[RMDB]
RNA sequence: GGGAACGACUCGAGUAGAGUCGAAAACUCGAAAGAGACCUGCAUAUCUUAGGCAGAUGAGCAAGUCCCGUCUGAAAAGCGAAAGCCCUAAGAUAUGCAGCUGUGACGACUUGUCGCAGAAAAUAAACAUUACUAAUCGGUUCGCCGAUUAGUAAUGAAAAGAAACAACAACAACAAC
Reactivity to 2A3 in 0.01 (KOAc 150mM, MgCl2 10mM, bicine 150mM(pH8.5), 24C), signal-to-noise 9, nucleotides 027 to 126: c000u000c010g020a020a030a010g080a010g020a050c010c000u000g000c000a000u000a000u000c000u000u000a000g000g000c000a000g000a040u030g020a030g060c080a160a050g090u150c010c020c000g000u000c010u010g080a130a100a050a020g030c020g060a090a030a020g010c000c000c000u000a000a000g000a000u000a000u000g000c000a000g000c000u010g010u010g000a010c040g120a210c110u140u300g000u010c000g000c010a000g110a020a070a000a010u270a020a060a000
Reactivity to DMS in 0.01 (KOAc 150mM, MgCl2 10mM, bicine 150mM(pH8.5), 24C), signal-to-noise 7, nucleotides 027 to 126: c000u000c010g020a090a090a120g010a030g010a120c180c010u010g010c000a010u000a000u000c000u010u000a010g000g010c010a010g010a010u000g000a070g010c030a110a130g010u050c010c070c000g020u000c000u000g000a060a050a120a090g000c010g000a110a080a130g000c020c000c000u000a000a000g000a020u000a000u000g000c000a010g000c000u000g010u000g010a020c010g010a150c230u050u060g010u000c000g010c010a010g000a070a040a060a060u050a110a120a190
Structure probing data (2A3 and DMS) for a 177-nucleotide construct.
In probing experiments dimethyl sulfate is read out at A N1 and C N3, which are open when not base-paired.
Conditions: 150 mM KOAc, 10 mM MgCl2 and 150 mM bicine (pH 8.5), 24 C.
It was measured as part of the RMDB library OK1LIB.
For DMS, 22,281 sequencing reads were counted.
For DMS the reverse transcriptase was MarathonRT.